Source information:
Structure probing data (2A3 and DMS) for a 177-nucleotide construct. For 2A3 the reverse transcriptase was SuperScript II with manganese. It was measured as part of the RMDB library TTRDEL. For DMS, 1,399 sequencing reads were counted. The RNA was probed in 150 mM KOAc, 10 mM MgCl2 and 150 mM bicine (pH 8.5) at 24 C. For DMS the reverse transcriptase was MarathonRT.
RNA sequence: GGGAACGACUCGAGUAGAGUCGAAAAGAUAUGGAAUAUCAUCCUUCUCGAAGAACUCGGAAACGAGGGAGAGAGCGAUGAGUAUUCCUAAGUCAAAGAUAUUGUGUAGUUCGCUACACAAUAUCAAGUCCUUGAUCAUGUUCGCAUGAUCAAGGACAAAAGAAACAACAACAACAAC
Reactivity to 2A3 in 0.01 (KOAc 150mM, MgCl2 10mM, bicine 150mM(pH8.5), 24C), signal-to-noise 2, nucleotides 027 to 126: g040a010u090a040u150g000g000a000a010u000a030u050c000a010u040c010c030u100u160c020u010c020g300a300a110g000a080a040c010u000c010g020g040a100a040a050c010g010a010g010g050g000a020g010a000g000a000g030c090g000a000u010g010a030g090u020a010u020u000c020c000u020a130a010g050u010c060a210a000a060g010a000u000a010u000u000g000u000g010u000a020g010u020u080c300g010c140u010a000c010a000c000a000a000u010a000u000c000a010a030
Reactivity to DMS in 0.01 (KOAc 150mM, MgCl2 10mM, bicine 150mM(pH8.5), 24C), signal-to-noise 2, nucleotides 027 to 126: g010a040u010a300u000g000g000a010a020u000a020u000c000a010u000c000c020u000u000c000u000c010g000a060a150g000a070a300c000u000c000g010g000a100a100a210c010g040a020g000g000g000a040g000a030g010a010g030c300g000a000u000g000a060g030u000a000u000u000c000c000u000a040a120g000u000c050a090a090a110g000a010u000a000u030u000g000u000g010u000a020g030u000u000c250g000c000u000a000c000a010c000a000a000u000a000u000c000a070a080